[RMDB]
RNA sequence: GGGAACGACUCGAGUAGAGUCGAAAAACUCCGAUGAUCUGACACGAUUCACCGAGCCCGUGGGCCACGUCGUAUACGGUUGGCGCCUUCACGGGGCUACGUUGGCUGUUGAGGCGACAACCAAUCCUAUGCAGCAUCCAUUCGUGGAUGCUGCAUAAAAAGAAACAACAACAACAAC
Reactivity to 2A3 in 0.01 (KOAc 150mM, MgCl2 10mM, bicine 150mM(pH8.5), 24C), signal-to-noise 2, nucleotides 027 to 126: a000c060u060c020c000g060a090u110g000a030u040c080u060g100a030c020a000c110g060a070u050u050c010a030c110c000g000a010g020c000c010c010g020u070g020g010g010c010c000a010c020g050u020c070g010u050a100u050a110c070g030g000u010u010g020g010c020g000c010c000u090u100c020a070c030g100g010g030g000c020u110a070c110g150u050u110g170g050c070u050g030u110u040g000a020g030g020c000g000a010c000a000a000c000c010a030a000u010c010c000
Reactivity to DMS in 0.01 (KOAc 150mM, MgCl2 10mM, bicine 150mM(pH8.5), 24C), signal-to-noise 1, nucleotides 027 to 126: a160c030u000c010c000g000a030u020g030a110u000c040u020g010a210c110a060c160g000a060u000u050c100a070c050c080g020a090g000c000c000c000g050u000g060g000g000c000c000a100c060g030u000c050g000u000a060u030a010c150g050g010u000u000g000g000c070g000c000c000u060u000c160a040c010g000g000g000g000c020u000a040c180g000u060u030g010g010c000u000g000u000u000g010a010g000g000c020g000a020c010a030a060c000c000a100a100u020c040c050

Annotation
This 177-nucleotide RNA was probed chemically with 2A3 and DMS. The 2A3 profile rests on 1,033 reads. Values cover nucleotides 27 to 126. The reactions ran in a buffer of 150 mM KOAc, 10 mM MgCl2 and 150 mM bicine (pH 8.5), at 24 C.